[RMDB]
RNA sequence: GGGAACGACUCGAGUAGAGUCGAAAACGUCCUAUACUUCGGUAUAGGACGAAAAAAGAUAUGGAUGCGAUGUGAGCGAAGAACUUGUUCGGAAACGAACAAGGGAGCUCCAUCCGCAUCCUAAGUCAAAAAAGAACUCCCGUUCGCGGGAGUUCAACAUAUGUUGAUGCUUCGGCAUCAACAUAUGAAAAGAAACAACAACAACAAC
Reactivity to 2A3 in 0.01 (KOAc 150mM, MgCl2 10mM, bicine 150mM(pH8.5), 24C), signal-to-noise 2, nucleotides 027 to 156: c010g000u010c000c000u000a010u000a000c020u040u050c230g050g000u000a000u000a010g000g000a000c000g000a000a000a000a000a000a000g040a000u030a010u050g010g000a000u010g000c010g000a000u010g170u210g030a000g000c020g190a180a000g000a010a020c000u000u000g000u000u000c020g010g010a040a020a030c000g000a000a000c000a000a000g010g000g000a000g010c010u000c000c000a000u010c010c050g000c000a000u000c000c000u000a010a000g010u000c010a010a040a110a100a000a120g010a020a000c000u020c020c030c010g020u040u090c300g000c010g060g000g050a000g000u010u000c000a000a010
An RNA of 207 nucleotides, treated with 2A3 and read out base by base.
Source: RMDB library RNAMAK, as collected in RNAgym.
The RNA was probed in 150 mM KOAc, 10 mM MgCl2 and 150 mM bicine (pH 8.5) at 24 C.
For 2A3, 1,767 sequencing reads were counted.
For 2A3 the reverse transcriptase was SuperScript II with manganese.